An RNA of 177 nucleotides, treated with 2A3 and DMS and read out base by base. For 2A3, 5,324 sequencing reads were counted. For DMS the reverse transcriptase was MarathonRT. The DMS profile rests on 6,845 reads.
RNA sequence: GGGAACGACUCGAGUAGAGUCGAAAAUUGCUCGUCGCUGACCGUCGCCUUCCAAGCCGGGUGGUUGAAGACAGCCUCCUGCCAAGCCAGGUACCGAUCCUUCAGCGCGGGAUCGAGGGCCUUGUCCCAGCGUACUACAUUUCGAUGUAGUACGCUGAAAAGAAACAACAACAACAAC
Reactivity to 2A3 in 0.01 (KOAc 150mM, MgCl2 10mM, bicine 150mM(pH8.5), 24C), signal-to-noise 3, nucleotides 027 to 126: u080u060g030c010u010c060g070u040c040g030c070u050g040a070c010c030g040u040c030g010c000c000u070u050c050c030a070a040g040c060c010g050g020g000u030g010g010u040u080g070a140a050g090a040c000a010g000c010c010u010c000c010u010g010c030c020a050a020g020c020c010a020g000g030u030a070c010c010g000a020u050c000c000u060u110c060a070g060c050g000c100g080g010g000a020u010c010g010a210g000g020g000c000c010u000u030g030u030c000c020
Reactivity to DMS in 0.01 (KOAc 150mM, MgCl2 10mM, bicine 150mM(pH8.5), 24C), signal-to-noise 5, nucleotides 027 to 126: u000u010g010c030u000c050g010u000c050g030c050u000g000a150c060c050g010u000c070g020c030c020u010u010c050c060a090a160g010c070c050g010g000g030u010g010g010u010u010g000a120a120g010a130c080a060g000c020c020u000c010c020u000g010c060c050a080a110g000c060c070a040g010g000u000a170c070c010g010a020u000c020c010u000u000c070a110g000c100g030c130g000g010g010a010u000c010g000a120g000g000g010c020c040u010u000g000u010c020c030